[RMDB]
RNA sequence: GGGAACGACUCGAGUAGAGUCGAAAAGGUCGGGUGUACGGCGUGCAGGGCAGGCGCUGGCAGAAGCCCGAUGGUACUGAACUGGAUCAGUUGCACAAGAUCGUUGUCAAUCUCAGCCAGGGCAUCGUCGUCCCUUGUAUUUCGAUACAAGGGACGAAAAAGAAACAACAACAACAAC
Reactivity to DMS in 0.01 (KOAc 150mM, MgCl2 10mM, bicine 150mM(pH8.5), 24C), signal-to-noise 1, nucleotides 027 to 126: g020g010u000c000g000g010g020u000g030u020a080c180g010g000c060g050u000g030c100a100g000g000g020c020a120g020g010c040g040c000u000g010g000c040a130g000a140a260g010c020c010c010g000a050u000g000g000u000a050c060u000g000a020a000c050u000g000g000a070u000c070a060g000u020u000g000c110a020c070a070a060g000a090u000c070g020u000u000g000u010c060a110a090u000c010u000c110a020g000c030c010a110g000g000g050c040a110u010c040g010
Chemical mapping of a 177-nucleotide RNA with DMS. Conditions: 150 mM KOAc, 10 mM MgCl2 and 150 mM bicine (pH 8.5), 24 C. The DMS profile rests on 971 reads. Source: RMDB library OK2TST, as collected in RNAgym.